[RMDB]
RNA sequence: GGGAACGACUCGAGUAGAGUCGAAAACGCAUGCGUACUCGUGACGGUGCGGAUUCGUUGGUUUGGGUCUGUAAUGGUAGGCCCUGACUGACGGGUCAGGGCUUGUUAAUGCAGGUCUGUGAGUGCGGGAGCAUGUAUGCUUCGGCGUACAUGCUCCAAAAGAAACAACAACAACAAC
Reactivity to 2A3 in 0.01 (KOAc 150mM, MgCl2 10mM, bicine 150mM(pH8.5), 24C), signal-to-noise 3, nucleotides 027 to 126: c010g030c020a020u220g130c010g000u010a020c020u070c130g300u300g080a010c050g000g030u020g010c020g000g000a020u050u030c030g010u010u070g070g090u120u130u150g030g000g000u010c000u010g030u040a070a010u030g040g020u010a000g000g010c000c000c000u000g000a000c000u000g010a000c020g110g020g000u010c000a000g000g000g000c000u000u000g020u030u030a080a020u080g010c010a010g000g030u010c000u000g070u000g030a100g020u100g030c000g020
Reactivity to DMS in 0.01 (KOAc 150mM, MgCl2 10mM, bicine 150mM(pH8.5), 24C), signal-to-noise 2, nucleotides 027 to 126: c020g000c020a000u000g000c030g000u000a020c020u030c150g000u040g000a050c050g030g000u020g000c010g000g010a050u000u010c030g000u010u000g000g030u000u010u040g010g010g000u000c010u000g000u000a060a070u010g000g010u000a010g000g000c000c000c000u000g000a000c000u010g000a140c300g000g000g000u000c000a020g000g000g000c010u020u000g010u000u000a050a050u020g000c000a030g000g010u000c000u000g030u020g010a080g000u000g010c130g000
The record gives the reactivity of an RNA of 177 nucleotides to 2A3 and DMS. The 2A3 profile rests on 3,988 reads. For DMS the reverse transcriptase was MarathonRT. Conditions: 150 mM KOAc, 10 mM MgCl2 and 150 mM bicine (pH 8.5), 24 C. For 2A3 the reverse transcriptase was SuperScript II with manganese.